Conditions: 150 mM KOAc, 10 mM MgCl2 and 150 mM bicine (pH 8.5), 24 C.
Structure probing data (DMS and 2A3) for a 207-nucleotide construct.
2A3 adducts were read by reverse transcription with SuperScript II with manganese.
Values cover nucleotides 27 to 156.
RNA sequence: GGGAACGACUCGAGUAGAGUCGAAAAAAGAUCGCUUUUCGGCCGUUACGGCGUUGUUCAAACAUGUAUUGUAAAUAUUGACAAACGCCAUGCAUUCGUGAAGAUGAUCAACAGACAUGAUGCCGUCACUGCUCGCGAGGGUAUGGAGCAAUACAAGUAGUCGUUCUCUAUUCGUAGAGAACGACUAAAAAGAAACAACAACAACAAC
Reactivity to DMS in 0.01 (KOAc 150mM, MgCl2 10mM, bicine 150mM(pH8.5), 24C), signal-to-noise 1, nucleotides 027 to 156: a010a070g020a090u010c060g000c050u000u010u000u000c040g000g020c050c030g000u000u000a030c050g040g040c030g050u000u000g000u000u000c030a110a090a070c030a180u020g010u000a030u000u010g010u000a040a110a080u020a120u010u030g000a100c030a030a060a100c060g030c010c000a050u000g020c050a100u000u000c010g040u010g040a010a170g010a080u010g010a030u000c040a070a090c070a100g010a120c060a140u000g000a110u000g000c000c130g020u000c030a030c020u000g030c020u000c070g000c070g010a150g020g020g070u000a050u000g020g010a150g050c040a030a050u000a120c030a050a080g000
Reactivity to 2A3 in 0.01 (KOAc 150mM, MgCl2 10mM, bicine 150mM(pH8.5), 24C), signal-to-noise 3, nucleotides 027 to 156: a000a000g140a040u090c050g010c030u100u030u030u040c010g040g000c020c030g070u070u100a080c070g020g000c050g010u010u040g050u130u080c040a070a090a060c050a040u150g080u140a100u060u120g040u170a050a090a120u230a150u100u170g060a020c130a140a100a020c050g010c000c000a000u020g010c010a050u020u040c000g020u020g030a070a020g090a190u200g020a030u080c010a000a090c020a040g130a000c040a080u270g010a070u110g160c020c000g000u030c030a050c120u110g010c050u030c020g010c020g000a010g020g050g000u040a030u020g020g040a020g000c000a010a010u080a090c030a100a000g020